[RMDB]
RNA sequence: GGGAACGACUCGAGUAGAGUCGAAAACACGAUGCCGGCCAAUGGCACAAGCACAAUCUUGGUGAUGCUAUAGACCCAAGAGGUACGGUCGCGACUGGCUUCGGCGAGGCUGAUUUGUGCCAAGGUAUGAAAAUACGCAAUUCGUUGCGUAUUUUCAAAAAGAAACAACAACAACAAC
Reactivity to DMS in 0.01 (KOAc 150mM, MgCl2 10mM, bicine 150mM(pH8.5), 24C), signal-to-noise 5, nucleotides 027 to 126: c080a130c160g010a080u010g010c020c040g010g020c040c040a110a170u000g010g000c000a020c030a050a040g030c170a090c080a080a070u000c000u000u000g000g000u000g010a120u010g020c140u010a080u010a070g010a250c300c000c030a060a020g000a060g000g000u000a160c090g000g010u000c050g010c070g000a070c130u000g010g000c050u000u010c070g020g000c020g010a040g000g020c030u000g000a150u010u000u010g020u000g010c000c000a060a180g000g010u000a090
Reactivity to 2A3 in 0.01 (KOAc 150mM, MgCl2 10mM, bicine 150mM(pH8.5), 24C), signal-to-noise 4, nucleotides 027 to 126: c070a010c040g100a070u110g040c030c030g060g020c020c020a110a150u070g000g000c000a010c010a030a000g030c020a020c010a090a150u000c010u050u050g130g040u050g120a040u040g060c040u110a060u060a300g030a030c000c000c010a030a010g040a030g050g060u150a060c050g020g020u030c020g000c020g130a150c050u060g010g070c000u130u120c040g020g000c010g020a020g020g000c020u010g020a170u040u000u060g020u010g000c000c000a030a050g060g000u090a110
This 177-nucleotide RNA was probed chemically with DMS and 2A3. The DMS profile rests on 5,413 reads. DMS adducts were read by reverse transcription with MarathonRT. In probing experiments dimethyl sulfate is read out at A N1 and C N3, which are open when not base-paired. Reactivities are given for positions 27 through 126.